[RMDB]
RNA sequence: GGGAACGACUCGAGUAGAGUCGAAAACGUGCCUUCAUGCUAAGGGUUUGAUAUCUGCUAAAACCCGGUGCAUUCAUCAAUGCAGGUUAAGCCAAAGGGAUGUCCCGACCGGAGUCCGACAAUCCAGAUAGCUCAAGAAUGUUCGCAUUCUUGAGAAACUGUGCCUAAGAUUCGUCUUAGGCACAGUAAAAGAAACAACAACAACAAC
Reactivity to DMS in 0.01 (KOAc 150mM, MgCl2 10mM, bicine 150mM(pH8.5), 24C), signal-to-noise 3, nucleotides 027 to 156: c110g010u000g010c020c020u000u000c070a060u010g020c020u000a300a140g000g000g030u010u010u010g010a210u000a050u010c050u010g040c040u000a140a060a050a020c000c010c000g010g030u000g000c030a070u000u000c090a010u000c080a090a180u010g000c010a070g020g030u010u000a100a110g020c020c030a040a090a120g000g000g000a110u010g000u000c000c010c020g030a120c040c030g010g010a210g020u000c020c030g010a080c040a040a110u000c040c030a220g010a120u000a110g020c000u010c010a010a020g000a050a020u010g000u010u000c300g050c000a030u000u010c040u000u000g010a000g010a050a000
Reactivity to 2A3 in 0.01 (KOAc 150mM, MgCl2 10mM, bicine 150mM(pH8.5), 24C), signal-to-noise 3, nucleotides 027 to 156: c050g060u060g040c000c020u090u130c090a050u090g000c010u040a040a100g010g010g010u000u000u000g040a030u030a070u110c040u140g000c050u070a030a050a020a010c000c010c000g000g010u000g030c000a040u090u170c030a100u080c080a110a100u110g020c010a030g070g000u070u090a060a010g050c020c010a140a070a010g060g000g000a070u050g070u030c050c020c000g020a020c020c020g040g000a020g030u030c030c030g010a050c060a050a030u040c030c000a010g070a210u090a040g020c000u000c000a000a000g000a000a000u000g010u040u060c170g010c110a000u000u000c010u000u010g000a000g000a000a000

An RNA of 207 nucleotides, treated with DMS and 2A3 and read out base by base.
Values cover nucleotides 27 to 156.
For DMS, 4,395 sequencing reads were counted.
The reactions ran in a buffer of 150 mM KOAc, 10 mM MgCl2 and 150 mM bicine (pH 8.5), at 24 C.
DMS adducts were read by reverse transcription with MarathonRT.
For 2A3, 1,785 sequencing reads were counted.